The record gives the reactivity of an RNA of 177 nucleotides to 2A3 and DMS. It was measured as part of the RMDB library RFM100. The DMS profile rests on 1,482 reads. 2A3 adducts were read by reverse transcription with SuperScript II with manganese. In probing experiments dimethyl sulfate is read out at A N1 and C N3, which are open when not base-paired. The RNA was probed in 150 mM KOAc, 10 mM MgCl2 and 150 mM bicine (pH 8.5) at 24 C.
[RMDB]
RNA sequence: GGGAACGACUCGAGUAGAGUCGAAAAUAUAAUAAAUGUCCUGCAGGUGAUUGGGGCUGUAGCAAUUUUAUUGAAGAUUAAAGUUUGAUUGACCUUUGUUAGGGUGAUUAACCCUUCUGAAAUUAAACUGUCUGGAUUUAUUCGUAAAUCCAGACAGAAAAGAAACAACAACAACAAC
Reactivity to 2A3 in 0.01 (KOAc 150mM, MgCl2 10mM, bicine 150mM(pH8.5), 24C), signal-to-noise 1, nucleotides 027 to 126: u050a000u000a040a040u000a050a040a050u030g130u130c000c000u080g060c080a040g120g210u130g060a050u170u180g010g000g000g050c020u000g080u200a070g090c140a060a030u040u170u090u040a030u180u130g120a100a050g020a050u180u180a050a030a000g010u100u130u100g080a180u020u070g010a030c000c020u150u100u060g020u060u040a030g090g000g000u050g000a060u100u030a030a060c000c000c000u070u000c020u000g000a050a000a000u060u120a000a050a260
Reactivity to DMS in 0.01 (KOAc 150mM, MgCl2 10mM, bicine 150mM(pH8.5), 24C), signal-to-noise 1, nucleotides 027 to 126: u010a090u020a050a020u040a000a060a070u000g010u000c170c030u040g000c120a060g000g000u000g000a230u000u000g010g010g000g000c030u000g010u010a020g000c060a100a040u010u000u030u020a030u000u050g000a160a000g000a130u010u020a030a100a050g000u020u010u000g000a080u040u000g040a100c100c040u000u000u000g010u020u000a050g000g000g010u050g000a090u060u090a120a040c010c050c000u000u000c050u000g010a060a020a050u030u010a010a090a070